RNA sequence: GGGAACGACUCGAGUAGAGUCGAAAAGAUAUGGAACGAUCAGGGUUGAGCACGGCCAUCGGAAACGAUGGCGGUGCAAUGAUGCCCUGAGUCGUUCCUAAGUCAAAGCGUAAGUUCGCUUACGCAAGUUGUUAAGUCGGUUCGCCGACUUAACAACAAAAGAAACAACAACAACAAC
Reactivity to 2A3 in 0.01 (KOAc 150mM, MgCl2 10mM, bicine 150mM(pH8.5), 24C), signal-to-noise 3, nucleotides 027 to 126: g030a000u050a030u170g000g010a010a030c000g010a000u030c000a010g040g000g020u080u060g110a010g050c020a010c100g300g000c000c020a000u000c010g010g030a100a040a020c020g030a010u020g000g000c030g010g000u000g000c010a010a050u110g010a040u170g000c010c010c000u000g000a000g000u010c000g000u010u000c000c000u000a020a010g030u000c050a060a080a050g000c000g020u000a000a010g020u040u280c300g010c180u020u000a010c010g000c020a020a010
Reactivity to DMS in 0.01 (KOAc 150mM, MgCl2 10mM, bicine 150mM(pH8.5), 24C), signal-to-noise 3, nucleotides 027 to 126: g000a070u030a300u010g000g010a020a020c010g010a060u000c010a000g000g000g000u000u000g000a300g020c000a010c010g000g020c000c000a000u010c010g000g000a120a060a130c000g010a000u000g000g020c000g000g040u000g000c010a070a050u010g000a110u000g000c000c000c000u000g000a020g000u000c000g040u000u000c000c000u000a010a100g000u000c020a110a090a210g020c000g000u000a000a010g000u000u000c260g000c010u000u000a010c010g010c000a070a060

Overview
This 177-nucleotide RNA was probed chemically with 2A3 and DMS. 2A3 adducts were read by reverse transcription with SuperScript II with manganese. The RNA was probed in 150 mM KOAc, 10 mM MgCl2 and 150 mM bicine (pH 8.5) at 24 C.